[RMDB]
RNA sequence: GGGAACGACUCGAGUAGAGUCGAAAAAAGCGUCGAAAUCUUGGUGUAGGUGUUACCAACUAUGCAGCUUGGCUGGCAAGUAAUUUUGCUUCUUAUGAAGAUGCUAAUGAUUUAACACAUGAACUAUUUGAGAGAUUACAGUAUGGACUCAUUAAAGAACUAAUCACCCAUUCGUGGGUGAUUAGUUAAAAGAAACAACAACAACAAC
Reactivity to DMS in 0.01 (KOAc 150mM, MgCl2 10mM, bicine 150mM(pH8.5), 24C), signal-to-noise 3, nucleotides 027 to 156: a040a060g010c030g030u000c040g010a080a110a070u000c040u010u010g010g020u000g020u000a060g010g030u010g000u010u010a100c030c010a050a080c050u000a080u000g010c040a070g020c040u000u020g000g040c010u000g020g020c030a050a090g020u010a080a080u000u000u010u010g050c020u010u010c030u010u000a080u000g010a120a150g000a090u000g000c020u000a090a080u010g010a150u000u000u000a070a070c040a060c050a090u000g000a070a080c050u000a100u010u010u000g000a140g020a120g010a120u000u010a070c060a070g010u000a150u000g030g000a090c030u000c030a090u010u000a030a090a080g000
Reactivity to 2A3 in 0.01 (KOAc 150mM, MgCl2 10mM, bicine 150mM(pH8.5), 24C), signal-to-noise 4, nucleotides 027 to 156: a000a000g070c030g010u040c020g040a070a070a060u090c040u070u020g050g000u070g040u060a040g040g010u040g040u040u040a040c000c000a040a040c020u060a050u140g030c040a010g020c050u060u120g040g000c010u020g010g010c010a010a020g020u050a030a160u040u080u050u060g000c000u020u080c010u060u170a170u220g050a050a050g010a030u020g000c020u030a080a000u110g080a060u040u110u160a070a030c040a000c010a050u090g090a080a040c020u070a080u120u170u080g070a080g000a000g010a020u100u100a080c020a020g050u070a070u060g050g010a020c010u010c040a000u040u080a070a150a070g060